An RNA of 177 nucleotides, treated with DMS and 2A3 and read out base by base. For 2A3, 2,845 sequencing reads were counted.

[RMDB]
RNA sequence: GGGAACGACUCGAGUAGAGUCGAAAACGAGACCGGGGGCGAACACUGGCUGGCCUUCGCCUGGAACCCGCGCUCGAACACCUGCUACCUCUUCGACCCCUUUGGGUUCUCGGACGAGCGCCUCAAGCGAGUUAUCCAUGUUCGCAUGGAUAACUCGAAAAGAAACAACAACAACAAC
Reactivity to DMS in 0.01 (KOAc 150mM, MgCl2 10mM, bicine 150mM(pH8.5), 24C), signal-to-noise 4, nucleotides 027 to 126: c040g010a050g010a090c100c050g010g000g020g000g020c050g000a040a050c140a100c090u010g010g010c050u000g030g000c070c060u000u000c050g010c010c020u010g010g010a100a130c050c000c030g030c160g010c020u000c040g000a100a100c120a110c050c030u010g010c070u010a050c090c050u010c070u010u000c040g010a090c030c010c020c110u000u010u000g020g000g010u000u000c050u000c040g000g000a120c070g010a060g010c110g030c020c070u010c090a080a120g000
Reactivity to 2A3 in 0.01 (KOAc 150mM, MgCl2 10mM, bicine 150mM(pH8.5), 24C), signal-to-noise 2, nucleotides 027 to 126: c030g010a010g060a080c020c040g000g010g000g000g000c040g010a070a000c080a020c090u070g070g020c040u040g090g040c020c010u100u070c030g010c000c020u010g070g080a050a070c060c010c000g040c050g020c000u000c010g010a050a010c030a050c030c010u010g050c020u100a130c030c030u100c000u080u060c050g160a300c000c010c000c020u050u080u080g020g000g010u110u010c040u030c040g050g020a090c090g010a030g000c020g040c010c040u150c070a060a040g110
For 2A3 the reverse transcriptase was SuperScript II with manganese.